[RMDB]
Structure probing data (2A3) for a 207-nucleotide construct. 2A3 is a SHAPE reagent: it acylates the 2'-hydroxyl of flexible nucleotides of all four kinds. For 2A3 the reverse transcriptase was SuperScript II with manganese. The reactions ran in a buffer of 150 mM KOAc, 10 mM MgCl2 and 150 mM bicine (pH 8.5), at 24 C.
RNA sequence: GGGAACGACUCGAGUAGAGUCGAAAAGAAAGAAAGAAAGUUCAUUGUUUAUCGGAAACUUUAAACUAUAACCAUUCAAACUUUUCCAGAAGUUAGUUUGAAUAGAAAUUAAAAUGAAACUUCUGAAUAACCUUAUCAUGCUUCGGCAUGAUAAGAAGAUACCCUCGUACUUCGGUACGAGGGUAUCAAAAGAAACAACAACAACAAC
Reactivity to 2A3 in 0.01 (KOAc 150mM, MgCl2 10mM, bicine 150mM(pH8.5), 24C), signal-to-noise 1, nucleotides 027 to 156: g010a000a010a020g000a090a050a010g060a000a120a050g020u010u100c110a120u070u050g040u030u120u070a090u100c010g050g080a020a050a110c000u030u060u060a030a070a010c030u010a040u060a270a090c100c000a000u000u000c000a000a000a000c010u030u000u000u010c050c000a020g020a000a000g000u000u000a000g010u060u000u020g040a010a030u030a120g030a070a130a020u080u150a040a070a040a080u060g030a010a010a010c000u000u000c000u000g020a010a010u050a030a020c010c000u000u000a000u000c000a000u000g000c000u020u040c160g050g000c000a000u000g000a000u000a000a000g000a020a000
The 2A3 profile rests on 1,067 reads.